[RMDB]
RNA sequence: GGGAACGACUCGAGUAGAGUCGAAAAGGUCACAUGCAUCUAAUGAAUACAUACAGGACAAUUUGUUGUUUAUUGUCAGCUUUGAGUUUAGGAUGUAUCAUAGGCACCAUACUUAUUUUUGGAGAUGCACUGAUCACUAUUUCGAUAGUGAUCAGUGAAAAGAAACAACAACAACAAC
Reactivity to 2A3 in 0.01 (KOAc 150mM, MgCl2 10mM, bicine 150mM(pH8.5), 24C), signal-to-noise 9, nucleotides 027 to 126: g040g020u050c040a030c010a080u050g000c000a010u000c020u070a150a040u120g090a080a030u070a060c030a010u080a030c050a050g100g030a000c000a010a010u020u010u090g040u010u010g020u010u070u040a040u020u030g010u000c020a040g080c060u100u110u150g100a120g030u060u060u090a080g030g030a040u020g010u030a030u040c030a050u090a070g070g010c050a010c030c010a030u070a110c060u130u160a130u160u160u030u100u120g070g030a100g000a030u080g020
Reactivity to DMS in 0.01 (KOAc 150mM, MgCl2 10mM, bicine 150mM(pH8.5), 24C), signal-to-noise 7, nucleotides 027 to 126: g000g010u000c050a080c150a100u010g010c020a030u010c020u010a100a070u010g010a100a040u010a060c050a030u010a070c090a180g000g000a020c010a020a080u000u000u000g000u000u000g000u000u000u000a110u030u000g000u000c020a070g000c070u000u000u010g010a230g020u000u000u000a090g010g010a030u010g010u000a020u000c080a060u010a080g010g010c080a110c030c030a050u010a050c120u010u010a100u000u010u010u000u000g010g010a080g000a080u010g010